[RMDB]
RNA sequence: GGGAACGACUCGAGUAGAGUCGAAAAAUGGGCCAACAAGCAGCACCUAAUAGGCCAAACUAUAUUGGUUUUAGGGAUAAUUUUAUUGGUUUGCUUUACUAUAACAGUAAUGGAAAUUUGGGUGUUUUGGCUGGUCAGGCAUCACAACUAAAUGCUGACUAGUGCCCUGAUUCGUCAGGGCACUAGUAAAAGAAACAACAACAACAAC
Reactivity to 2A3 in 0.01 (KOAc 150mM, MgCl2 10mM, bicine 150mM(pH8.5), 24C), signal-to-noise 2, nucleotides 027 to 156: a000u110g020g000g000c040c000a150a020c090a070a060g040c050a050g020c050a070c010c030u030a030a010u020a060g130g000c000c000a020a020a000c010u090a040u140a110u220u110g070g070u030u070u180u150a060g010g000g050a050u040a110a070u080u100u070u260a010u020u100g050g000u010u000u010g070c020u000u160u020a030c050u040a020u150a300a030c050a050g000u050a030a000u040g000g010a010a130a180u060u090u000g040g000g020u000g050u030u130u080u000g050g000c020u000g000g010u030c020a020g050g030c000a050u030c020a000c060a070a060c050u100a080a090a070u050g050c020u000g070
Structure probing data (2A3) for a 207-nucleotide construct. Reactivities are given for positions 27 through 156.